[RMDB]
Chemical mapping of a 177-nucleotide RNA with 2A3 and DMS. In probing experiments dimethyl sulfate is read out at A N1 and C N3, which are open when not base-paired. It was measured as part of the RMDB library RFM100. Reactivities are given for positions 27 through 126.
RNA sequence: GGGAACGACUCGAGUAGAGUCGAAAACGAUCUGUCGGUCGGUAUGGUAAGUGACGCAAGCUGUAUGGUAAGUGACGCAAGCUGAAAGAAGAGCGCUGAACAGCAGAAAAAAUACCGAUAGAAACAACGAGUGAAAGGCAUUCGUGCCUUUCACUCGAAAAGAAACAACAACAACAAC
Reactivity to 2A3 in 0.01 (KOAc 150mM, MgCl2 10mM, bicine 150mM(pH8.5), 24C), signal-to-noise 1, nucleotides 027 to 126: c100g030a020u010c000u000g090u070c040g000g030u000c000g040g050u090a050u000g170g000u180a160a140g020u120g000a000c040g000c050a000a000g000c000u000g010u070a040u130g100g000u110a160a090g210u140g040a050c080g000c050a030a010g070c000u060g010a020a060a070g010a020a000g030a000g000c030g000c020u010g010a090a050c000a010g070c000a000g300a000a070a000a000a000a000u000a000c010c000g000a000u020a050g070a000a110a000c020a000a040
Reactivity to DMS in 0.01 (KOAc 150mM, MgCl2 10mM, bicine 150mM(pH8.5), 24C), signal-to-noise 1, nucleotides 027 to 126: c290g020a050u030c030u000g000u000c010g010g010u000c040g010g000u050a020u080g010g000u000a260a140g000u000g010a130c160g000c000a080a210g000c000u000g000u010a090u010g000g000u000a120a150g010u030g000a040c100g020c050a030a190g060c040u000g000a030a030a030g020a110a190g030a080g050c040g040c030u000g000a060a060c040a140g010c000a010g000a030a000a140a140a020a050u040a040c060c000g000a030u000a090g000a000a150a060c130a160a050